Chemical mapping of a 177-nucleotide RNA with DMS and 2A3. High 2A3 reactivity points to a flexible backbone, as in loops and unpaired stretches. For DMS, 8,395 sequencing reads were counted.
RNA sequence: GGGAACGACUCGAGUAGAGUCGAAAAGAUAUGGAUCGAGCGAUAAGAUGUGGUCGGAAACGACCAUACAUCUUUUGACGCUCAAUCCUAAGUCAAAGUGAGCACUUUGUUCGCAAAGUGCUCACAACGUAGAGAAGAACUUCGGUUCUUCUCUACGAAAAGAAACAACAACAACAAC
Reactivity to DMS in 0.01 (KOAc 150mM, MgCl2 10mM, bicine 150mM(pH8.5), 24C), signal-to-noise 5, nucleotides 027 to 126: g010a020u000a290u010g010g000a010u000c040g010a000g020c000g020a100u000a020a010g010a010u000g020u000g010g000u000c000g010g000a060a050a150c010g000a010c000c000a050u010a050c090a030u000c000u000u010u000u010g010a220c060g000c000u010c000a020a010u000c000c000u000a030a120g000u000c020a110a090a160g010u000g000a010g000c000a000c000u000u000u000g010u000u010c240g020c000a000a000a010g010u000g000c000u000c000a000c000a020a060
Reactivity to 2A3 in 0.01 (KOAc 150mM, MgCl2 10mM, bicine 150mM(pH8.5), 24C), signal-to-noise 3, nucleotides 027 to 126: g020a000u050a020u080g000g000a000u010c050g000a020g000c010g010a030u050a300a050g000a010u030g010u020g010g020u010c000g000g000a050a030a010c010g000a000c010c010a000u050a020c010a010u000c010u040u080u060u100g090a030c010g000c000u000c000a000a000u000c000c000u010a070a020g040u020c050a100a060a070g000u010g010a000g000c000a000c020u010u000u040g040u090u170c220g010c150a000a000a010g000u000g000c000u000c010a000c000a000a000